An RNA of 177 nucleotides, treated with 2A3 and DMS and read out base by base. For 2A3 the reverse transcriptase was SuperScript II with manganese. The RNA was probed in 150 mM KOAc, 10 mM MgCl2 and 150 mM bicine (pH 8.5) at 24 C.
RNA sequence: GGGAACGACUCGAGUAGAGUCGAAAAGGCCGUGGUUGGGCACGGGCACGGGCAUCACAACCUGCGCCUGUGGCCACCGCGUCACCGUGACAGUCAGCUCGCCAAAGAAGCCUGUCAUCAGGGCUUCCACUAUGGAUCCGUUCGCGGAUCCAUAGUGAAAAGAAACAACAACAACAAC
Reactivity to 2A3 in 0.01 (KOAc 150mM, MgCl2 10mM, bicine 150mM(pH8.5), 24C), signal-to-noise 2, nucleotides 027 to 126: g030g000c020c020g030u020g000g040u160u210g020g020g090c000a000c000g000g000g000c020a010c010g000g000g000c020a050u090c060a060c010a070a040c010c010u000g000c010g000c010c010u000g010u000g010g130c000c000a010c000c000g010c000g000u020c030a070c040c020g020u040g040a020c010a030g060u080c010a020g040c030u050c040g040c040c040a100a080a060g010a000a000g000c000c000u060g050u110c060a090u090c020a050g030g000g020c000u010u000c000
Reactivity to DMS in 0.01 (KOAc 150mM, MgCl2 10mM, bicine 150mM(pH8.5), 24C), signal-to-noise 4, nucleotides 027 to 126: g000g010c120c020g040u000g000g020u020u010g030g000g020c000a010c010g000g000g020c000a010c000g000g010g030c020a030u000c300a140c250a160a200c020c010u000g000c050g010c000c000u010g010u000g000g000c000c000a020c020c010g000c000g000u000c100a120c020c020g000u010g000a090c090a050g000u000c060a080g010c050u000c040g000c050c100a080a090a150g030a020a010g000c020c010u000g000u010c140a110u000c220a140g010g010g000c020u000u000c020